[RMDB]
RNA sequence: GGGAACGACUCGAGUAGAGUCGAAAAGUCGCGCCGGUGAUGACGUCGAACAACGAUUGUGCGGACAGCCCGAGCUUCUCGGCCAGCACGAACGCCUCGGCGAUCGCGAUCUGCUGCACCGCCAGCAAGGGCCUUACUAGUUCGCUAGUAAGGCCCUAAAAGAAACAACAACAACAAC
Reactivity to DMS in 0.01 (KOAc 150mM, MgCl2 10mM, bicine 150mM(pH8.5), 24C), signal-to-noise 1, nucleotides 027 to 126: g060u000c020g000c040g010c070c050g000g040u000g010a090u000g000a090c020g000u000c000g010a070a160c080a190a110c050g000a110u000u010g000u000g010c020g000g000a110c190a190g020c120c000c010g010a070g020c210u000u000c010u000c000g000g000c130c040a070g000c000a020c030g020a010a080c030g020c040c040u000c050g010g000c000g010a070u000c010g010c020g020a090u000c240u000g020c000u010g010c030a200c010c050g000c160c010a040g030c040a100
Reactivity to 2A3 in 0.01 (KOAc 150mM, MgCl2 10mM, bicine 150mM(pH8.5), 24C), signal-to-noise 1, nucleotides 027 to 126: g090u050c000g100c000g020c060c010g010g110u160g070a240u140g050a000c010g020u010c010g020a080a020c020a030a000c070g030a090u070u070g000u030g020c010g030g030a110c030a080g040c050c030c000g010a000g000c260u230u080c030u000c040g010g040c020c010a020g000c040a000c020g030a030a020c010g020c000c000u000c050g050g020c010g130a180u010c000g010c000g040a040u040c090u090g000c000u020g000c060a130c130c030g080c040c000a030g020c000a010
About this RNA: Conditions: 150 mM KOAc, 10 mM MgCl2 and 150 mM bicine (pH 8.5), 24 C. Structure probing data (DMS and 2A3) for a 177-nucleotide construct. Reactivities are given for positions 27 through 126. For DMS the reverse transcriptase was MarathonRT. For 2A3, 1,057 sequencing reads were counted. High DMS reactivity at an A or C suggests that its Watson-Crick edge is free. For 2A3 the reverse transcriptase was SuperScript II with manganese. For DMS, 1,002 sequencing reads were counted.